An RNA of 177 nucleotides, treated with DMS and 2A3 and read out base by base. High DMS reactivity at an A or C suggests that its Watson-Crick edge is free. It was measured as part of the RMDB library OK2TRN.
[RMDB]
RNA sequence: GGGAACGACUCGAGUAGAGUCGAAAACAGUAACGGGUCACUACAUACUGACGAAAUCAGUUCUGAUGAGACGGACUCAGAAAAUCCAGAAUCUGAUGACAACCCUAUAGAAGAUAGUGUUAAAGCACUGCACUGUUGGAUUCGUCCAACAGUGCAGAAAAGAAACAACAACAACAAC
Reactivity to DMS in 0.01 (KOAc 150mM, MgCl2 10mM, bicine 150mM(pH8.5), 24C), signal-to-noise 1, nucleotides 027 to 126: c040a020g000u010a010a090c060g110g050g000u000c110a050c020u000a060c010a060u000a050c050u010g010a030c170g020a090a070a100u010c000a020g050u000u000c040u170g000a120u020g000a040g000a060c140g010g010a140c090u000c060a060g010a110a110a090a060u020c050c070a160g020a100a070u010c040u000g000a010u000g010a090c140a090a120c000c000c000u000a300u000a100g020a050a070g000a270u000a020g000u000g000u010u000a050a040a290g000c170a100
Reactivity to 2A3 in 0.01 (KOAc 150mM, MgCl2 10mM, bicine 150mM(pH8.5), 24C), signal-to-noise 1, nucleotides 027 to 126: c020a020g030u050a090a040c100g120g070g060u020c020a010c040u000a040c010a060u000a010c010u030g060a040c050g020a070a060a060u000c000a010g040u030u010c010u000g140a170u020g010a000g000a020c100g250g020a110c050u000c080a000g200a060a150a000a040u030c090c010a010g000a050a030u120c020u000g000a030u010g030a010c030a000a100c010c010c000u020a100u050a300g080a100a010g050a080u130a100g040u010g000u070u170a100a040a000g040c000a030